Source: RMDB library OK2TST, as collected in RNAgym. An RNA of 177 nucleotides, treated with 2A3 and DMS and read out base by base. The RNA was probed in 150 mM KOAc, 10 mM MgCl2 and 150 mM bicine (pH 8.5) at 24 C. For 2A3 the reverse transcriptase was SuperScript II with manganese.
RNA sequence: GGGAACGACUCGAGUAGAGUCGAAAAGAGGCACACGUCGAACGGAGGGAAGUGGUACCCGGUAUCCGCAUCUCGGGCAAGGCGGAGAUCCUGGAAGGCCUCUCCCCGGGAGAAGAGAUCGUGGUGGCGAUCUUCGCCUAUUCGUAGGCGAAGAUCGAAAAGAAACAACAACAACAAC
Reactivity to 2A3 in 0.01 (KOAc 150mM, MgCl2 10mM, bicine 150mM(pH8.5), 24C), signal-to-noise 2, nucleotides 027 to 126: g050a010g050g020c030a000c010a020c040g030u050c030g040a090a020c050g040g050a160g100g000g000a030a120g040u060g070g030u140a150c000c020c030g030g030u050a030u010c000c010g030c030a050u040c040u050c100g020g000g000c080a080a050g030g040c000g020g010a010g000a040u190c010c020u080g040g020a040a040g270g000c000c000u000c030u000c000c010c000c010g030g010g020a090g030a090a050g090a000g010a010u190c040g010u050g090g220u080g040g000
Reactivity to DMS in 0.01 (KOAc 150mM, MgCl2 10mM, bicine 150mM(pH8.5), 24C), signal-to-noise 2, nucleotides 027 to 126: g000a100g000g020c050a100c040a060c100g020u000c060g000a300a210c030g000g010a160g010g010g010a030a060g030u000g010g020u020a170c050c030c040g000g000u000a100u010c000c030g020c060a080u010c030u000c060g000g000g010c120a090a110g000g010c000g010g010a030g000a110u020c000c030u020g000g000a120a090g000g000c010c030u000c030u000c040c000c020c030g000g010g000a190g000a080a090g000a120g010a040u000c040g000u010g000g000u010g010g010